Chemical mapping of a 207-nucleotide RNA with DMS and 2A3.
RNA sequence: GGGAACGACUCGAGUAGAGUCGAAAAGAAAUUACAUGCUCAGUUCUUCAUUAUUAAUUUUUUGAAGAGCACAUAGCCAAUAGUCACUCCGCAUUCCAAAAGUAUUUGGAAUACCACAUACCCAUUGUUAUGCUAGAAAGAGUCAUCUUCACCAUUGCAUAAUUGAUCGAUUCGUCGAUCAAUUAUGAAAAGAAACAACAACAACAAC
Reactivity to DMS in 0.01 (KOAc 150mM, MgCl2 10mM, bicine 150mM(pH8.5), 24C), signal-to-noise 3, nucleotides 027 to 156: g000a160a080a130u000u000a070c050a110u000g020c010u000c070a210g050u000u000c010u000u000c010a020u010u000a070u010u010a110a050u000u000u000u000u000u000g000a000a020g010a030g030c030a060c080a120u000a080g000c050c100a050a120u000a090g010u010c060a090c060u000c060c050g000c050a050u000u010c020c030a030a040a110a270g010u000a110u010u000u010g010g000a040a050u000a050c010c060a040c070a120u000a070c030c000c030a260u000u010g000u000u000a170u010g010c030u000a040g020a120a070a120g010a100g010u000c110a090u000c040u000u000c030a090c060c010a160u000u000g040
Reactivity to 2A3 in 0.01 (KOAc 150mM, MgCl2 10mM, bicine 150mM(pH8.5), 24C), signal-to-noise 8, nucleotides 027 to 156: g010a010a090a010u190u120a070c050a050u100g010c000u030c060a020g010u020u000c000u010u000c010a030u000u120a050u100u210a230a220u180u160u030u030u020u020g010a000a000g000a010g020c030a010c010a080u150a010g010c020c020a040a070u060a070g050u070c020a010c060u020c040c040g020c030a020u020u010c020c010a010a030a030a050g110u060a190u050u030u020g020g010a040a040u050a130c020c020a020c010a050u050a040c000c020c030a030u010u020g030u080u060a060u070g020c040u040a020g080a070a130a000g030a010g020u050c020a060u010c050u050u040c030a080c110c010a080u050u220g020
The RNA was probed in 150 mM KOAc, 10 mM MgCl2 and 150 mM bicine (pH 8.5) at 24 C. 2A3 adducts were read by reverse transcription with SuperScript II with manganese. Values cover nucleotides 27 to 156.